[RMDB]
RNA sequence: GGGAACGACUCGAGUAGAGUCGAAAAGAUAUGGAGUUGAACUACCUCUAUAUUUACGUUGAAAUCGGAAACGAUGGAGUAAAUGUGGAGGCAACUCCUAAGUCAAAGGAGCCCUUCGGGGCUCCAAGUCUAGAUAUGGGUUCGCCCAUAUCUAGACAAAAGAAACAACAACAACAAC
Reactivity to 2A3 in 0.01 (KOAc 150mM, MgCl2 10mM, bicine 150mM(pH8.5), 24C), signal-to-noise 1, nucleotides 027 to 126: g040a000u020a030u180g000g000a000g020u010u020g030a120a040c050u110a120c240c000u000c010u000a010u010a000u040u020u010a020c020g150u220u050g020a030a020a000u020c000g010g030a020a080a110c010g000a000u000g020g020a060g000u000a020a000a040u010g010u010g010g000a020g020g030c000a000a020c000u000c000c000u000a110a020g030u010c040a050a020a200g020g000a000g000c020c000c030u040u050c240g010g000g010g000c000u000c000c000a010a010
Reactivity to DMS in 0.01 (KOAc 150mM, MgCl2 10mM, bicine 150mM(pH8.5), 24C), signal-to-noise 2, nucleotides 027 to 126: g000a060u000a300u010g010g000a040g020u020u010g020a070a040c090u020a300c010c000u000c000u020a030u000a010u000u010u000a010c010g020u000u030g000a080a150a030u000c030g010g010a080a060a240c000g010a000u000g020g000a120g010u000a000a010a010u010g010u000g000g000a020g000g000c020a010a000c000u000c000c000u010a030a090g000u000c010a050a130a210g020g000a020g010c010c000c000u000u000c200g030g090g000g030c020u000c010c000a020a030